This 177-nucleotide RNA was probed chemically with 2A3 and DMS. High 2A3 reactivity points to a flexible backbone, as in loops and unpaired stretches. Reactivities are given for positions 27 through 126. The RNA was probed in 150 mM KOAc, 10 mM MgCl2 and 150 mM bicine (pH 8.5) at 24 C.
[RMDB]
RNA sequence: GGGAACGACUCGAGUAGAGUCGAAAAGUAUGUAUGGAUAACCAUACGUACAAAUAAUUGCCUCAUGGUGGUGGCUGGGGGCAGCCUCAUGGUGGUGGCUGUGGAAAAUAAAGAUCCGAAAGGAUCAGGAUAUCUUGAUCUUCGGAUCAAGAUAUCCAAAAGAAACAACAACAACAAC
Reactivity to 2A3 in 0.01 (KOAc 150mM, MgCl2 10mM, bicine 150mM(pH8.5), 24C), signal-to-noise 5, nucleotides 027 to 126: g010u010a010u010g010u000a000u000g000g040a220u130a300a180c010c000a000u000a000c010g000u010a010c000a000a060a000u230a000a090u080u130g040c000c010u080c050a080u130g100g010u050g010g080u100g030g000c040u030g020g010g010g010g020c010a010g000c000c010u030c020a050u130g090g020u040g050g030u020g020g000c030u030g010u080g070g090a060a060a010a000u240a030a130a020g020a000u000c000c000g020a030a050a020g010g000a000u000c000a000
Reactivity to DMS in 0.01 (KOAc 150mM, MgCl2 10mM, bicine 150mM(pH8.5), 24C), signal-to-noise 3, nucleotides 027 to 126: g010u000a000u000g010u000a000u020g010g000a270u080a170a160c000c010a010u000a000c000g010u000a000c000a030a110a030u010a030a100u020u060g010c000c000u020c060a070u010g000g000u040g000g020u030g010g000c030u000g030g000g010g000g020c020a040g020c010c010u010c090a050u030g030g000u010g000g010u000g000g030c050u030g010u010g030g020a040a040a120a110u010a080a100a060g010a000u010c000c000g000a130a050a160g010g010a000u000c000a040
Source: RMDB library OK1LIB, as collected in RNAgym.
The DMS profile rests on 4,790 reads.